[RMDB]
An RNA of 177 nucleotides, treated with 2A3 and DMS and read out base by base. It was measured as part of the RMDB library OK1LIB. The reactions ran in a buffer of 150 mM KOAc, 10 mM MgCl2 and 150 mM bicine (pH 8.5), at 24 C. The DMS profile rests on 1,956 reads. For DMS the reverse transcriptase was MarathonRT. Values are in units of 0.01, from 0 to 300, in steps of 10.

RNA sequence: GGGAACGACUCGAGUAGAGUCGAAAAGGGAGCGGAACACACGAUACGCGAGGGGAGGGGGUCACGAAUAAGCCGAAUAAGUGUGGAAAGGCGAAUAUAUAUAGAAGUGACGAAUAUAUAUGAAGAAGGGUUAUCUUAAGUUCGCUUAAGAUAACCCAAAAGAAACAACAACAACAAC
Reactivity to 2A3 in 0.01 (KOAc 150mM, MgCl2 10mM, bicine 150mM(pH8.5), 24C), signal-to-noise 3, nucleotides 027 to 126: g010g000g000a110g020c010g000g020a030a050c020a000c010a000c070g070a020u150a180c040g050c100g110a080g040g010g050g000a170g000g020g000g000g070u020c000a010c050g080a020a010u190a210a000g080c030c000g000a070a020u160a150a100g050u050g030u080g040g070a060a030a000g030g000c010g000a000a010u050a000u000a000u000a000u000a110g070a240a010g050u030g030a030c020g000a030a020u050a000u000a000u000a000u140g050a010a020g060a050a040
Reactivity to DMS in 0.01 (KOAc 150mM, MgCl2 10mM, bicine 150mM(pH8.5), 24C), signal-to-noise 2, nucleotides 027 to 126: g000g000g000a190g040c120g060g020a070a240c020a080c010a100c080g000a060u050a070c130g000c090g030a050g000g020g000g000a030g020g020g000g000g000u000c070a000c140g000a080a050u010a070a230g010c050c020g010a120a030u000a080a070g060u010g000u010g000g000a070a040a110g000g070c050g000a160a040u000a030u060a000u040a120u020a070g030a120a120g000u000g000a020c100g000a020a040u000a020u000a050u000a020u000g000a110a070g000a070a150